Annotation: This 207-nucleotide RNA was probed chemically with 2A3 and DMS. Reactivities are given for positions 27 through 156. The DMS profile rests on 2,261 reads. Source: RMDB library M2RFPK, as collected in RNAgym.
RNA sequence: GGGAACGACUCGAGUAGAGUCGAAAAGGGUGAUGUCUGCUAACCUUUAUCAAUGGGGGCACUCGGUCGUGCUGUGGGUAGAAAUUUUAUUUCGUGCCUACCUUAGACGCUUGUCGUCGGGAGUAUGUGGGACUGAUGAACUUCGGUUCAUCAGUAAUCACAUGGUAGUCUUCGGACUACCAUGUGAAAAAGAAACAACAACAACAAC
Reactivity to 2A3 in 0.01 (KOAc 150mM, MgCl2 10mM, bicine 150mM(pH8.5), 24C), signal-to-noise 2, nucleotides 027 to 156: g050g000g000u040g030a060u090g120u080c060u030g000c010u110a130a140c000c040u050u040u070a280u140c100a090a080u180g000g000g000g000g000c060a030c060u150c080g040g000u090c000g080u030g000c070u040g030u000g000g010g000u040a040g130a030a070a030u120u240u130u210a180u040u060u130c110g030u090g000c000c000u000a020c000c000u030u010a020g000a000c020g040c030u210u300g140u300c060g000u010c030g020g050g000a050g060u110a110u210g030u090g000g000g010a000c000u000g000a000u000g000a000a000c000u050u050c110g090g000u000u000c000a000u000c000a000g000u000a000a000
Reactivity to DMS in 0.01 (KOAc 150mM, MgCl2 10mM, bicine 150mM(pH8.5), 24C), signal-to-noise 1, nucleotides 027 to 156: g000g000g000u000g020a040u010g000u000c080u020g020c040u000a140a170c060c030u000u010u010a220u010c060a120a150u000g000g060g010g030g030c080a050c030u000c050g000g060u000c060g030u000g010c060u000g020u000g010g040g040u010a250g000a070a030a100u000u000u000u000a120u030u040u000c010g010u000g010c010c010u000a040c000c070u080u000a160g030a040c010g000c050u000u000g000u000c000g020u000c030g000g010g000a050g020u000a080u000g020u010g010g000g020a130c000u000g000a020u000g020a010a010c000u000u000c230g100g010u000u000c000a020u000c000a000g010u000a020a240